RNA sequence: GGGAACGACUCGAGUAGAGUCGAAAACACGGGCGCAGUGCUGCGCGAGACUCUAUGCCCGUGACUGUUACGGACAAAUUCCGUAACCGUGUAGGCCAACAUCAAAGAUGCGUACCAAGCUGCGUUUCAACCUGCGUGGGUUGAGGCGACUUAGCGGCAAGUAUACGUACUUCGGUACGUAUACUUGAAAAGAAACAACAACAACAAC
Reactivity to DMS in 0.01 (KOAc 150mM, MgCl2 10mM, bicine 150mM(pH8.5), 24C), signal-to-noise 3, nucleotides 027 to 156: c010a060c020g020g010g020c010g030c050a090g040u000g020c040u000g000c080g000c140g000a100g010a080c030u000c030u010a080u010g000c000c000c010g020u000g000a080c060u010g020u000u000a020c000g020g020a050c060a120a080a300u020u000c000c000g010u000a010a010c000c040g020u010g020u000a140g020g020c020c010a080a090c060a070u010c050a100a120a200g010a100u010g020c020g010u000a100c020c020a020a290g000c030u000g020c000g010u000u000u010c000a020a020c000c010u010g010c300g000u010g000g000g010u000u010g010a000g010g020c000g010a080c050u010u000a110g020c010g060g010
Reactivity to 2A3 in 0.01 (KOAc 150mM, MgCl2 10mM, bicine 150mM(pH8.5), 24C), signal-to-noise 9, nucleotides 027 to 156: c020a000c000g000g010g000c030g010c090a030g020u040g070c060u120g000c050g010c050g030a030g040a060c030u020c030u070a050u110g000c000c000c000g000u010g040a000c010u010g000u000u000a000c000g010g020a040c120a180a300a180u300u000c010c000g000u000a000a000c010c000g000u040g050u080a080g030g090c040c010a070a070c030a130u210c070a070a090a060g090a080u160g020c010g030u050a070c010c040a100a040g010c010u020g000c010g000u000u010u010c010a010a010c010c010u200g130c180g170u300g020g000g000u000u000g000a000g010g010c010g050a110c040u060u130a010g010c020g010g000

Structure probing data (DMS and 2A3) for a 207-nucleotide construct.
2A3 adducts were read by reverse transcription with SuperScript II with manganese.
The data come from the RNA Mapping Database (RMDB), library VIROID.
For DMS, 10,858 sequencing reads were counted.